[RMDB]
RNA sequence: GGGAACGACUCGAGUAGAGUCGAAAACACUAUUGGUUCGCCAAUAGUGAAACGGCAAGCCGAAGCCGAACGGCAUGCCGAAGCCGAACGGCAACGGCAAAAAAACUGCGUUCUUCGGAACGCAGAACGUGUGCAAAUGGUUCGCCAUUUGCACACGAAAAGAAACAACAACAACAAC
Reactivity to DMS in 0.01 (KOAc 150mM, MgCl2 10mM, bicine 150mM(pH8.5), 24C), signal-to-noise 1, nucleotides 027 to 126: c000a000c000u000a020u000u000g000g000u000u000c150g040c000c010a050a030u000a000g000u000g000a040a060a170c140g000g000c180a090a130g000c010c020g050a040a300g000c000c000g000a000a300c010g000g000c010a040u030g010c070c050g000a060a060g000c000c000g000a040a250c050g000g010c000a010a270c000g000g020c030a000a000a010a030a030a050a060c000u000g000c000g000u000u000c000u000u000c190g030g000a010a000c020g000c000a000g000a010a060